[RMDB]
RNA sequence: GGGAACGACUCGAGUAGAGUCGAAAAAAGGUAGUCAAAAGGAAACCAUCUAGUCAGAACUGGACUACAUACAACUACCUAACGUCUUAACACAGUGCACAUGGUGUAGAGUCACUUAGACUAGUGGGACGAUAUCAGUGUUCGCACUGAUAUCGUCAAAAGAAACAACAACAACAAC
Reactivity to DMS in 0.01 (KOAc 150mM, MgCl2 10mM, bicine 150mM(pH8.5), 24C), signal-to-noise 4, nucleotides 027 to 126: a040a050g000g020u000a010g020u010c150a110a100a090a090g030g000a110a120a300c040c050a040u030c030u000a020g000u010c060a070g020a050a130c160u030g000g010a040c010u000a080c070a050u000a050c230a060a050c010u000a030c010c040u000a040a040c180g020u020c030u010u010a070a080c160a070c030a080g020u000g010c010a080c100a090u070g000g000u000g000u000a070g000a090g000u000c010a070c090u020u000a080g020a010c080u000a040g020u000g000g010
Reactivity to 2A3 in 0.01 (KOAc 150mM, MgCl2 10mM, bicine 150mM(pH8.5), 24C), signal-to-noise 6, nucleotides 027 to 126: a000a000g020g000u040a020g000u040c090a010a000a090a120g160g020a110a130a030c010c000a030u110c020u010a020g010u020c040a050g080a210a130c100u120g020g030a030c030u020a010c010a000u130a040c030a030a010c010u040a030c000c000u040a070a040c080g070u020c040u090u130a140a030c080a030c020a140g060u060g080c050a030c030a170u170g030g040u040g040u030a050g010a040g070u040c020a030c120u060u120a030g000a020c010u010a020g020u010g030g060
The record gives the reactivity of an RNA of 177 nucleotides to DMS and 2A3. Conditions: 150 mM KOAc, 10 mM MgCl2 and 150 mM bicine (pH 8.5), 24 C. For 2A3, 5,859 sequencing reads were counted. The DMS profile rests on 4,522 reads. Reactivities are rounded to 0.1 and cut off at 0 and 3.